[RMDB]
RNA sequence: GGGAACGACUCGAGUAGAGUCGAAAAACGGUGGACAUCGACUACGAGACCCUUGCCUCGGUAUGCCGGAAGGUGAAGGCGCGACUCGAAGGUGCCGUGGAGGUGCACGUCACCUCACCUUCGGGCACCGGACUUCACGGUUCGCCGUGAAGUCCGGAAAAGAAACAACAACAACAAC
Reactivity to 2A3 in 0.01 (KOAc 150mM, MgCl2 10mM, bicine 150mM(pH8.5), 24C), signal-to-noise 1, nucleotides 027 to 126: a000c020g030g020u050g000g070a010c000a050u090c090g080a070c050u130a020c070g070a010g130a150c020c050c000u000u160g030c020c010u030c000g040g020u140a120u130g000c020c020g140g010a000a020g130g030u060g110a060a020g050g120c070g000c090g160a020c000u040c150g130a050a030g060g000u020g020c060c020g000u040g080g090a060g050g020u130g020c080a070c300g130u120c040a010c000c000u000c000a040c020c000u050u000c170g000g040g000c000a020
Source: RMDB library OK2TRN, as collected in RNAgym. Structure probing data (2A3) for a 177-nucleotide construct. The RNA was probed in 150 mM KOAc, 10 mM MgCl2 and 150 mM bicine (pH 8.5) at 24 C.